[RMDB]
RNA sequence: GGGAACGACUCGAGUAGAGUCGAAAACUCAACUGACAUACAAGGGGAGGUUUCGGCCAAAUGUUGUAUGCAGAAAGCGUGAGGAAGGUAGCACUUAGACACUCACGAGCAGCGGUUCGGCAGUAGUAAAGGUCCUGGCGCUUCGGCGCCAGGACAACUCAUUAUAUGACUUCGGUCAUAUAAUGAGAAAAGAAACAACAACAACAAC
Reactivity to DMS in 0.01 (KOAc 150mM, MgCl2 10mM, bicine 150mM(pH8.5), 24C), signal-to-noise 1, nucleotides 027 to 156: c000u000c040a110a110c010u000g000a090c060a140u000a050c040a050a060g000g000g030g020a300g040g010u000u000u000c140g020g040c040c010a010a110a130u000g010u010u000g000u000a040u000g000c020a080g020a060a070a130g020c020g010u000g010a060g000g000a120a070g010g010u000a120g030c060a130c050u000u000a080g030a180c020a110c070u000c030a090c070g000a130g080c030a040g000c040g000g020u000u010c030g010g050c020a060g000u000a060g050u000a040a050a130g030g020u000c000c000u000g040g000c000g000c000u000u000c240g030g030c000g060c000c000a040g010g010a000c000a000a020
Reactivity to 2A3 in 0.01 (KOAc 150mM, MgCl2 10mM, bicine 150mM(pH8.5), 24C), signal-to-noise 2, nucleotides 027 to 156: c030u020c020a030a080c020u020g060a070c000a050u050a010c010a020a030g050g020g020g020a050g040g010u010u060u100c150g170g000c020c010a050a040a020u160g020u040u020g000u020a040u040g000c000a000g070a080a050a010g060c020g010u030g010a020g010g090a070a070g050g010u070a030g030c020a020c100u100u090a040g030a100c050a020c060u010c010a020c020g000a040g000c000a010g020c020g090g030u070u070c030g070g020c050a020g030u160a010g020u030a130a110a000g110g000u000c010c000u000g020g000c000g000c000u050u080c170g080g010c090g000c020c000a000g000g000a000c000a000a000